[RMDB]
RNA sequence: GGGAACGACUCGAGUAGAGUCGAAAAUUAAGGAGCCAUUCCCUUGUGGAUGGUUUUUAUUUCCGGUCGACAGAUCUCAGAUCGAAUGCUGGCAUUAGGAUUACUUGGUCUUGAGCUCCCGAUAGGUCACUAAUGCCAGCUUCGGCUGGCAUUAGUGAAAAGAAACAACAACAACAAC
Reactivity to 2A3 in 0.01 (KOAc 150mM, MgCl2 10mM, bicine 150mM(pH8.5), 24C), signal-to-noise 2, nucleotides 027 to 126: u220u090a070a060g060g000a000g020c000c000a000u030u050c000c050c080u050u300g110u160g060g000a000u000g030g000u010u000u000u110u030a050u000u050u000c000c000g000g050u000c020g080a010c030a050g010a040u050c050u040c050a050g020a090u030c010g060a090a030u110g030c000u000g080g000c000a070u110u120a040g140g020a050u020u070a060c040u000u020g060g000u040c000u020u090g070a030g020c000u030c000c000c000g080a070u050a060g120g070u000
Reactivity to DMS in 0.01 (KOAc 150mM, MgCl2 10mM, bicine 150mM(pH8.5), 24C), signal-to-noise 1, nucleotides 027 to 126: u040u020a050a120g000g000a020g000c000c000a000u010u020c000c000c190u060u000g010u050g000g020a040u000g030g000u020u050u000u000u000a070u030u000u030c000c020g000g030u000c010g000a130c270a060g050a020u000c070u000c030a080g000a010u020c010g030a030a000u030g060c010u040g010g030c040a030u000u020a040g000g010a040u000u000a130c050u010u020g020g000u000c000u020u000g000a250g050c050u010c040c080c000g000a010u000a110g010g000u030

Chemical mapping of a 177-nucleotide RNA with 2A3 and DMS.